[RMDB]
RNA sequence: GGGAACGACUCGAGUAGAGUCGAAAAUGCGGAAAAUCCCUUAACGGGAGAUCGUUGGUGGACUACUGCUGAUAAGCCAUGGCAAGCAUUGGCCACAUGCUUUGAAUUGAAUGAAGUUAUGAAAAUGCAUCCACUACUAGUUCGCUAGUAGUGGAUGAAAAGAAACAACAACAACAAC
Reactivity to 2A3 in 0.01 (KOAc 150mM, MgCl2 10mM, bicine 150mM(pH8.5), 24C), signal-to-noise 3, nucleotides 027 to 126: u050g000c020g020g060a050a010a020a150u030c010c000c000u030u030a100a040c050g020g000g030a110g030a080u020c020g020u020u040g050g020u070g040g000a020c020u050a000c010u040g020c000u010g010a090u050a250a020g020c020c010a070u080g040g020c020a030a030g020c030a080u030u160g070g020c000c000a030c000a030u060g000c000u120u070u070g110a200a190u150u130g060a080a110u250g030a030a020g040u170u260a120u090g040a050a020a040a030u070g040
Reactivity to DMS in 0.01 (KOAc 150mM, MgCl2 10mM, bicine 150mM(pH8.5), 24C), signal-to-noise 7, nucleotides 027 to 126: u010g020c010g020g010a040a070a230a220u000c000c000c010u000u000a070a070c120g000g010g000a130g000a070u000c030g020u000u000g010g020u010g010g000a040c050u000a300c050u000g010c030u010g010a140u000a080a100g010c030c060a150u000g010g010c030a080a110g020c080a060u000u010g010g000c010c030a070c080a050u000g000c020u000u000u000g010a090a140u010u000g010a090a090u010g000a040a080g010u000u010a030u010g010a090a040a060a090u010g000